[RMDB]
RNA sequence: GGGAACGACUCGAGUAGAGUCGAAAAUCAAAUAAUUCCACCGACUGCCCAUUGUGGGUUACCAGUUGCUCUGAUGAUGGCCCAAGAGGGAGUAAAGAGAAGAAGCCAGAUAGGAUCAACAAAAAAACAAAAAAGUAAUGUUCGCAUUACUUUUUUGAAAAGAAACAACAACAACAAC
Reactivity to 2A3 in 0.01 (KOAc 150mM, MgCl2 10mM, bicine 150mM(pH8.5), 24C), signal-to-noise 1, nucleotides 027 to 126: u060c030a060a090a060u150a040a110u200u040c020c020a050c100c020g040a030c040u060g020c070c000c040a070u110u190g040u080g110g000g000u020u060a070c040c010a000g030u050u050g010c030u020c030u100g040a030u040g010a030u030g070g010c000c000c050a070a030g050a100g060g050g010a050g000u120a080a130a000g080a010g030a170a040g030a020a000g040c000c060a010g010a060u060a010g040g000a040u050c010a010a010c000a030a110a030a000a000a000a000
Reactivity to DMS in 0.01 (KOAc 150mM, MgCl2 10mM, bicine 150mM(pH8.5), 24C), signal-to-noise 2, nucleotides 027 to 126: u030c090a100a050a120u000a100a120u000u010c010c010a130c070c090g030a070c060u000g020c010c010c020a180u000u000g000u020g010g010g020u000u000a050c100c030a070g000u010u010g020c100u020c020u000g010a090u000g000a060u000g000g020c040c000c020a090a050g000a110g000g000g000a060g000u010a050a050a120g010a120g000a110a080g010a060a140g010c060c030a040g010a080u000a130g000g000a120u000c040a050a070c100a000a010a020a060a070a060a160

This 177-nucleotide RNA was probed chemically with 2A3 and DMS. The RNA was probed in 150 mM KOAc, 10 mM MgCl2 and 150 mM bicine (pH 8.5) at 24 C. The data come from the RNA Mapping Database (RMDB), library M2PK90. 2A3 adducts were read by reverse transcription with SuperScript II with manganese. Reactivities are given for positions 27 through 126. For DMS, 1,143 sequencing reads were counted.